[RMDB]
RNA sequence: GGGAACGACUCGAGUAGAGUCGAAAAUGGACGUUGUUCGCAACGUCCACAUACUGAGACGUACGUUAAACGUAUCGCGGGCAAAACUGCAGUUAGAAUAAGUACCUAUUGAGUUCGCUCAAUAGAACCAAUAAGUGUGGUUCGCCACACUUAUUGGAAAAGAAACAACAACAACAAC
Reactivity to DMS in 0.01 (KOAc 150mM, MgCl2 10mM, bicine 150mM(pH8.5), 24C), signal-to-noise 5, nucleotides 027 to 126: u000g000g000a010c000g020u000u000g030u000u020c210g010c000a010a000c000g010u000c000c010a020c110a040u000a100c080u010g000a110g010a130c070g000u000a020c040g010u000u010a060a080a190c020g010u000a020u010c100g010c050g020g000g000c050a050a040a080a130c060u000g000c030a070g010u000u000a050g010a080a120u010a050a080g010u010a090c170c010u000a010u000u000g000a010g020u010u000c180g010c000u000c000a000a010u000a000g000a070a150
Reactivity to 2A3 in 0.01 (KOAc 150mM, MgCl2 10mM, bicine 150mM(pH8.5), 24C), signal-to-noise 7, nucleotides 027 to 126: u030g000g000a000c000g010u000u010g020u050u050c180g000c100a010a000c010g000u000c000c000a000c000a000u040a010c010u090g060a020g040a070c030g030u020a010c020g010u030u220a180a210a030c010g020u030a020u130c060g000c030g040g030g010c060a050a070a090a070c040u080g000c010a080g020u080u130a070g070a170a080u180a240a020g070u050a070c010c000u000a000u010u010g000a010g020u010u120c210g020c070u020c000a010a000u000a010g010a030a040

This 177-nucleotide RNA was probed chemically with DMS and 2A3. The reactions ran in a buffer of 150 mM KOAc, 10 mM MgCl2 and 150 mM bicine (pH 8.5), at 24 C. Values cover nucleotides 27 to 126. The DMS profile rests on 6,730 reads.